[RMDB]
RNA sequence: GGGAACGACUCGAGUAGAGUCGAAAAUGACUCCAUCAUUUCUGGGCCUGUGCUCAUAAACUGCUCUCUGUGCAAACCUCUGGGCUGUGGUGACUCUCCCACAUGUCCAGCCUUUAGAAAUGAUUUCUUUCAAUUCAACCAUUAACUUUAUAAAUCGCCAUUGACGACUGUUCGCAGUCGUCAAUGGAAAAGAAACAACAACAACAAC
Reactivity to 2A3 in 0.01 (KOAc 150mM, MgCl2 10mM, bicine 150mM(pH8.5), 24C), signal-to-noise 1, nucleotides 027 to 156: u100g010a020c060u000c040c000a020u000c030a000u070u020u090c060u080g000g010g040c010c010u120g000u090g020c020u020c070a090u190a120a180a010c060u060g010c030u010c000u010c000u050g060u040g130c080a040a040a090c040c030u000c020u020g000g000g000c010u010g000u000g000g010u020g200a120c050u000c090u100c080c030c000a050c010a010u280g000u000c000c010a030g080c000c000u220u290u140a000g000a000a020a000u080g030a000u080u210u060c010u000u080u050c080a110a050u000u090c000a000a040c020c030a030u040u130a200a050c030u000u300u000a110u070a020a120a100u080c020g030